Notes
Chemical mapping of a 207-nucleotide RNA with 2A3 and DMS. DMS adducts were read by reverse transcription with MarathonRT. The reactions ran in a buffer of 150 mM KOAc, 10 mM MgCl2 and 150 mM bicine (pH 8.5), at 24 C. The DMS profile rests on 1,752 reads.
RNA sequence: GGGAACGACUCGAGUAGAGUCGAAAAGUUUACCGAGUUCGACGGGAAAGCGGGUAAGAGCCUGGAGGCGGAAGCGCAUAAGCAACAAGGCGUUCACUCUGAGCGGGAAAGAUGUUUAGCGAUCGUUGAUGAAGUGAUGCCAAAAGGCUUGCUGUACCGAUAUCUGACCUUUCGAGGUCAGAUAUCGAAAAGAAACAACAACAACAAC
Reactivity to 2A3 in 0.01 (KOAc 150mM, MgCl2 10mM, bicine 150mM(pH8.5), 24C), signal-to-noise 2, nucleotides 027 to 156: g010u040u010u100a120c020c000g010a040g010u060u070c040g060a060c090g070g000g050a080a080a020g040c060g000g020g040u080a140a100g020a000g050c040c040u040g010g010a030g020g000c030g030g070a070a020g030c040g000c040a070u080a130a020g060c000a030a040c030a060a070g100g000c010g040u060u040c030a020c030u040c040u090g020a010g000c060g010g000g060a090a110a010g070a100u130g060u120u180u150a030g020c040g010a040u090c030g030u000u080g010a100u060g020a040a030g020u030g020a010u110g030c010c000a040a070a020a000g040g000c000u000u020g010c010u040g040u060a040c000
Reactivity to DMS in 0.01 (KOAc 150mM, MgCl2 10mM, bicine 150mM(pH8.5), 24C), signal-to-noise 1, nucleotides 027 to 156: g020u010u000u000a170c000c000g000a140g070u000u000c000g010a080c000g020g010g000a060a070a040g070c000g040g000g010u010a030a150g000a060g010c010c000u000g040g020a300g010g000c040g010g020a070a060g030c040g030c060a090u000a090a120g010c100a080a140c010a120a190g000g010c000g030u000u000c110a010c020u000c050u000g040a020g000c030g030g000g010a050a100a060g030a100u000g060u010u020u000a100g000c080g000a070u000c060g000u000u000g000a200u000g010a090a020g000u000g000a150u020g000c030c010a020a080a120a110g010g020c020u000u010g030c070u000g040u010a120c120